[RMDB]
RNA sequence: GGGAACGACUCGAGUAGAGUCGAAAAAAGAUGAAGAUGCUUCUUCUGAGUGUGAUGUAGAAGAGGAAACGUCAGUUGAUGAAGCUCAGGCCAUUAUCACUGCACCAUUGUCACUGUCCAUUCAGGAUACUACCCGAUGAUUCGUCAUCGGGUAGUAAAAAGAAACAACAACAACAAC
Reactivity to DMS in 0.01 (KOAc 150mM, MgCl2 10mM, bicine 150mM(pH8.5), 24C), signal-to-noise 4, nucleotides 027 to 126: a060a050g010a080u000g010a110a080g020a060u010g020c060u000u010c010u000u000c010u000g000a140g020u010g010u010g010a070u010g010u010a050g010a150a040g000a120g010g000a030a050a090c110g010u000c010a070g010u000u010g010a050u000g000a090a120g010c040u000c110a080g010g010c030c040a100u000u010a040u010c020a040c060u000g000c070a050c060c060a080u000u020g000u010c030a060c040u010g000u000c020c030a110u000u000c070a080g010g000a270
Reactivity to 2A3 in 0.01 (KOAc 150mM, MgCl2 10mM, bicine 150mM(pH8.5), 24C), signal-to-noise 3, nucleotides 027 to 126: a000a000g120a060u120g010a030a020g050a050u090g040c030u040u040c000u020u000c000u010g010a010g060u080g040u090g020a070u060g050u170a050g020a170a010g070a030g060g070a130a090a010c050g080u070c050a050g030u070u080g060a060u050g030a040a010g000c020u000c060a030g120g000c020c010a040u110u050a040u080c010a000c040u010g010c020a030c010c000a080u010u060g040u050c010a000c060u030g010u030c000c000a010u020u060c010a010g010g020a010